RNA sequence: GGGAACGACUCGAGUAGAGUCGAAAACACCGUCUUCUCCCCGACGGUUUCAAUCCAUAGCUUCACGUUGUGUAGCGUAGGUGGAAGGUAUCGUGUGGUGUAUAAACACCACAUAGUCUCUUAGGGGUCAAGCUGAUAAACUUCGGUUUAUCAGCAACCCUUAAAUAGUGUUCGCACUAUUUAAGGGAAAAGAAACAACAACAACAAC
Reactivity to 2A3 in 0.01 (KOAc 150mM, MgCl2 10mM, bicine 150mM(pH8.5), 24C), signal-to-noise 7, nucleotides 027 to 156: c010a000c000c010g010u000c020u180u020c050u130c000c010c000c010g000a010c010g020g000u010u060u080c050a040a040u010c010c010a040u040a090g000c000u060u070c010a020c070g300u300u290g010u090g020u060a010g020c020g080u100a090g020g110u020g010g040a030a020g060g030u100a050u190c070g010u010g000u010g000g040u010g050u020a100u120a240a220a020c000a000c000c000a000c000a000u010a010g020u000c020u000c020u130u150a030g000g020g000g000u040c080a090a020g000c000u000g000a000u000a000a000a000c000u030u040c100g080g000u000u000u000a000u000c000a000g000c000a000a000
Reactivity to DMS in 0.01 (KOAc 150mM, MgCl2 10mM, bicine 150mM(pH8.5), 24C), signal-to-noise 3, nucleotides 027 to 156: c050a090c010c000g040u000c020u000u010c030u000c000c000c010c040g000a040c040g010g010u000u010u020c080a120a120u000c020c010a090u000a180g020c020u000u020c030a030c020g010u000u030g030u000g020u000a040g020c010g020u010a060g010g030u000g000g020a070a080g000g010u000a070u000c080g040u000g020u000g010g040u010g030u000a140u000a140a120a100c000a010c000c000a010c000a010u000a040g010u000c050u000c020u000u010a250g020g010g020g030u000c030a060a210g010c000u010g010a020u000a010a000a010c000u000u010c270g050g010u000u010u010a000u000c000a010g010c010a010a010

Chemical mapping of a 207-nucleotide RNA with 2A3 and DMS. Conditions: 150 mM KOAc, 10 mM MgCl2 and 150 mM bicine (pH 8.5), 24 C. The data come from the RNA Mapping Database (RMDB), library M2RFPK.